Structure probing data (2A3 and DMS) for a 177-nucleotide construct. For DMS, 868 sequencing reads were counted. For DMS the reverse transcriptase was MarathonRT. As a SHAPE reagent, 2A3 marks flexible, mostly unpaired nucleotides at the ribose 2'-OH.
RNA sequence: GGGAACGACUCGAGUAGAGUCGAAAACAGUUAAGUGCGUCCCUCCCGAAGCUGCGCGCUCGGUCGAAGAGGACGACCAUCGCCGAUAGAGGACGACCGGUCUUCGGUCAAGGGAAUAAGAGUAAAAUAGCGUAAACUACUUCGGUAGUUUACGCUAAAAAGAAACAACAACAACAAC
Reactivity to 2A3 in 0.01 (KOAc 150mM, MgCl2 10mM, bicine 150mM(pH8.5), 24C), signal-to-noise 1, nucleotides 027 to 126: c000a000g110u130u200a270a010g040u070g100c000g050u000c000c030c050u020c040c000c000g020a050a030g010c020u040g070c050g000c050g000c140u020c000g010g010u050c080g030a040a040g050a160g090g000a000c090g010a000c000c020a040u000c040g000c020c000g050a060u150a230g040a050g030g030a060c030g000a010c000c020g040g060u140c060u190u150c030g080g000u000c000a000a020g130g000g000a000a130u100a090a020g040a020g170u200a000a020a120a190
Reactivity to DMS in 0.01 (KOAc 150mM, MgCl2 10mM, bicine 150mM(pH8.5), 24C), signal-to-noise 2, nucleotides 027 to 126: c070a100g030u030u000a100a100g000u000g020c020g030u000c010c010c020u020c050c020c010g000a050a040g020c000u000g050c210g040c110g010c030u000c090g040g020u000c080g000a110a110g000a140g000g030a130c070g000a030c020c040a170u000c050g000c050c010g000a100u000a090g000a040g000g000a110c100g020a070c070c060g000g000u010c070u000u020c000g000g030u010c060a050a080g000g000g030a160a060u000a070a060g000a110g010u010a060a060a060a120

It was measured as part of the RMDB library M2PK90.